Chemical mapping of a 177-nucleotide RNA with 2A3 and DMS. The reactions ran in a buffer of 150 mM KOAc, 10 mM MgCl2 and 150 mM bicine (pH 8.5), at 24 C.

[RMDB]
RNA sequence: GGGAACGACUCGAGUAGAGUCGAAAAUACGUGGAGCCAUGGUAUAUCCUCAGCAUCUGGAGUCCCUGGAAAGGGGAGAGAUGAAGCACGGAUCGGCAGACUCGGAUGUAGAGCUGGACUCGCAAUCCAGGUGGUAUGGAUUCGUCCAUACCACCUGAAAAGAAACAACAACAACAAC
Reactivity to 2A3 in 0.01 (KOAc 150mM, MgCl2 10mM, bicine 150mM(pH8.5), 24C), signal-to-noise 3, nucleotides 027 to 126: u140a050c060g010u040g040g040a020g030c000c030a090u060g070g000u110a170u030a050u200c030c010u030c020a020g010c000a030u000c020u070g100g030a090g120u060c000c010c040u050g100g120a140a110a140g000g000g030g000a030g010a000g010a040u050g080a060a010g030c020a010c070g010g030a060u050c040g000g030c040a010g010a090c020u010c030g040g070a060u090g030u130a080g010a020g060c030u030g010g010a060c000u000c010g040c070a020a050u050c050
Reactivity to DMS in 0.01 (KOAc 150mM, MgCl2 10mM, bicine 150mM(pH8.5), 24C), signal-to-noise 4, nucleotides 027 to 126: u000a060c050g030u000g020g000a090g000c040c030a060u000g020g000u010a060u000a090u000c050c000u000c120a120g000c030a020u010c020u020g030g010a190g010u000c010c010c000u010g020g010a060a150a060g000g020g010g000a070g000a100g010a060u000g000a100a090g000c140a120c140g010g010a060u000c080g020g000c050a080g000a090c060u010c040g010g010a100u010g010u000a160g010a070g010c040u000g020g000a100c070u000c110g010c130a090a110u010c060

DMS adducts were read by reverse transcription with MarathonRT.